[RMDB]
RNA sequence: GGGAACGACUCGAGUAGAGUCGAAAACUCAAUGUAGGGAAUAACAUUGAAUUGAUACAAAUACCUUUUUCGGUGUAGGGAAAAACACCGAAUUGAUACAGAUACCUUUCUCAAUGUAGGGAAUAACAAAACAGGCAUCGCUUCGGCGAUGCCUGAAGCUAGAAUAUGUGUUCGCACAUAUUCUAGCAAAAGAAACAACAACAACAAC
Reactivity to DMS in 0.01 (KOAc 150mM, MgCl2 10mM, bicine 150mM(pH8.5), 24C), signal-to-noise 1, nucleotides 027 to 156: c030u000c020a080a080u000g010u020a050g000g000g010a200a130u000a120a110c000a010u000u020g040a040a000u000u020g000a050u000a110c040a140a180a110u000a020c000c000u000u000u000u060u000c000g010g030u000g010u000a050g020g010g000a120a110a110a120a010c020a010c010c000g000a030a000u020u010g010a080u000a050c010a190g000a290u000a010c010c030u020u000u010c060u000c020a060a070u000g020u000a110g000g020g010a050a080u000a030a110c080a060a100a050a220c020a020g000g000c000a000u000c000g060c000u000u000c300g080g010c010g000a000u000g020c010c010u000g000a000a060
Reactivity to 2A3 in 0.01 (KOAc 150mM, MgCl2 10mM, bicine 150mM(pH8.5), 24C), signal-to-noise 4, nucleotides 027 to 156: c020u020c000a020a020u040g020u060a120g060g040g070a110a170u130a090a040c010a020u030u040g020a100a080u070u090g050a090u170a240c080a020a140a090u180a100c000c010u000u010u020u000u030c020g000g000u000g000u010a010g010g010g050a130a170a050a000a000c000a000c000c000g000a000a000u000u010g010a000u020a040c030a020g080a030u060a060c010c010u050u100u030c030u030c050a070a130u160g060u100a080g010g010g070a050a100u120a140a050c070a030a030a020a020c000a000g000g000c010a000u000c000g000c030u070u070c150g060g000c010g000a000u000g000c010c000u000g000a000a000
Source: RMDB library M2RFPK, as collected in RNAgym.
An RNA of 207 nucleotides, treated with DMS and 2A3 and read out base by base.
High 2A3 reactivity points to a flexible backbone, as in loops and unpaired stretches.